RNA sequence: GGGAACGACUCGAGUAGAGUCGAAAAUUGUCUCAUGGCCGUGUAUGAAAUUUAAGUAACACGACUGUGGUAGAUUUGUUCUAUAGAGCCGGUUGCCGCAAAUAGAUAGAACUACCAAUAUGUUUGUACAAAUGUUAAACAUUAAUUGAUUAACAGACAAUAAUGUGACAUUCGUGUCACAUUAUUGAAAAGAAACAACAACAACAAC
Reactivity to 2A3 in 0.01 (KOAc 150mM, MgCl2 10mM, bicine 150mM(pH8.5), 24C), signal-to-noise 4, nucleotides 027 to 156: u050u060g020u030c000u000c060a030u030g010g000c000c040g000u010g010u050a080u120g130a040a210a110u190u260u160a150a110g030u060a070a000c000a000c010g040a010c040u060g000u040g030g050u040a020g010a220u020u040u060g020u000u000c000u010a020u010a050g070a030g130c150c050g150g060u210u160g110c080c020g000c040a050a100a070u040a030g080a000u020a030g030a010a020c040u030a040c030c000a000a020u140a080u150g060u020u120u070g060u070a060c040a060a190a040u000g010u050u040a020a090a020c000a010u090u270a170a130u140u150g040a020u110u100a030a040c020a030g080a030
Reactivity to DMS in 0.01 (KOAc 150mM, MgCl2 10mM, bicine 150mM(pH8.5), 24C), signal-to-noise 2, nucleotides 027 to 156: u020u030g030u010c050u000c000a040u000g040g020c000c010g060u000g030u010a110u000g040a080a110a270u010u000u000a110a260g010u010a080a040c000a020c040g010a010c020u010g050u030g020g020u000a110g000a080u000u000u010g050u000u000c010u000a130u000a170g000a150g020c000c020g000g010u010u020g020c000c050g010c060a010a070a100u000a080g000a150u000a110g010a070a070c040u000a300c040c030a080a120u000a040u010g000u000u000u030g000u020a300c090a090a060a170u040g010u010u000a000a020a100c000a070u000u000a070a090u000u010g000a090u020u000a060a070c020a100g030a150

Structure probing data (2A3 and DMS) for a 207-nucleotide construct. For 2A3, 1,711 sequencing reads were counted. 2A3 adducts were read by reverse transcription with SuperScript II with manganese. The DMS profile rests on 2,706 reads. Conditions: 150 mM KOAc, 10 mM MgCl2 and 150 mM bicine (pH 8.5), 24 C.